This 207-nucleotide RNA was probed chemically with DMS and 2A3. The DMS profile rests on 3,839 reads. Reactivities are given for positions 27 through 156. High 2A3 reactivity points to a flexible backbone, as in loops and unpaired stretches. The reactions ran in a buffer of 150 mM KOAc, 10 mM MgCl2 and 150 mM bicine (pH 8.5), at 24 C. For DMS the reverse transcriptase was MarathonRT.
[RMDB]
RNA sequence: GGGAACGACUCGAGUAGAGUCGAAAAUUAGCAGCCAAUGGGACAACAGACAUGCAUACCUCAGUUCCAAGAGUGAAAGGUGGGCAAAGAAAUAUUACUGAUGACAGCAGAGACCAGCCUUUUAUCAAGAAGAUGCACUUCACCAUAAGGCUAACAACCAGGCAGUAUUAUUCGUAAUACUGCCUGGAAAAGAAACAACAACAACAAC
Reactivity to DMS in 0.01 (KOAc 150mM, MgCl2 10mM, bicine 150mM(pH8.5), 24C), signal-to-noise 3, nucleotides 027 to 156: u000u010a130g010c070a050g000c020c010a090a110u010g010g020g000a120c040a050a150c060a120g000a110c150a060u020g000c040a080u000a090c020c020u010c060a140g020u000u000c040c040a110a150g020a140g030u010g030a080a100a050g030g050u000g010g020g000c010a060a080a080g000a080a070a090u010a080u000u000a090c040u000g000a060u000g030a150c040a060g020c030a060g000a220g010a060c010c010a070g020c000c010u000u000u000u000a070u010c030a070a180g030a050a060g010a100u010g010c060a040c040u000u010c070a110c020c020a080u000a050a090g020g000c030u020a050a090c070a070a210
Reactivity to 2A3 in 0.01 (KOAc 150mM, MgCl2 10mM, bicine 150mM(pH8.5), 24C), signal-to-noise 3, nucleotides 027 to 156: u110u060a030g030c030a010g000c010c020a020a030u030g010g010g020a060c030a120a030c040a130g080a020c040a060u060g000c000a030u080a140c000c020u090c030a040g030u100u000c050c010a070a030g050a010g060u090g030a050a000a040g070g000u010g010g000g000c040a020a000a060g080a020a090a000u140a030u180u080a030c040u030g080a060u080g050a070c080a050g060c020a020g050a000g020a100c010c000a020g050c000c000u030u050u020u040a090u100c050a060a000g030a030a010g010a050u050g010c040a030c070u080u040c030a030c050c000a020u030a140a000g000g000c000u000a050a000c030a030a070